Chemical mapping of a 177-nucleotide RNA with DMS and 2A3.
The 2A3 profile rests on 2,876 reads.
The RNA was probed in 150 mM KOAc, 10 mM MgCl2 and 150 mM bicine (pH 8.5) at 24 C.
Values cover nucleotides 27 to 126.
RNA sequence: GGGAACGACUCGAGUAGAGUCGAAAAGAUAUGGACGCACGUUUCUCGAAGAACUCGGAAACGAGGGAGAGACACGUAGCGUCCUAAGUCAAAUCAUUCUUCAAGUCUUCGGACUUGAAGAAUGAAAGGAUUUAAACAACUUCGGUUGUUUAAAUCCAAAAGAAACAACAACAACAAC
Reactivity to DMS in 0.01 (KOAc 150mM, MgCl2 10mM, bicine 150mM(pH8.5), 24C), signal-to-noise 2, nucleotides 027 to 126: g010a040u000a300u000g020g000a000c000g040c000a020c000g000u000u000u000c000u010c000g010a140a120g000a140a240c000u000c010g000g000a130a090a190c000g000a000g020g000g000a080g020a030g000a010c060a030c000g000u000a140g040c000g020u000c000c000u000a000a100g000u000c050a110a120a180u000c000a010u000u000c000u000u000c000a010a010g030u000c000u000u030c200g010g010a010c000u000u000g000a030a000g000a000a000u000g000a000a050a160
Reactivity to 2A3 in 0.01 (KOAc 150mM, MgCl2 10mM, bicine 150mM(pH8.5), 24C), signal-to-noise 1, nucleotides 027 to 126: g020a010u080a040u120g000g000a000c000g020c020a000c020g010u030u020u010c030u000c010g250a300a060g000a080a040c010u040c020g010g050a060a050a040c040g010a010g010g000g020a040g000a020g000a020c000a000c010g020u050a060g000c000g000u000c000c000u000a010a000g000u000c020a010a060a070u030c010a010u000u020c010u000u000c000a000a020g020u000c010u030u240c300g140g010a000c000u000u000g000a000a000g000a000a000u010g000a000a000a000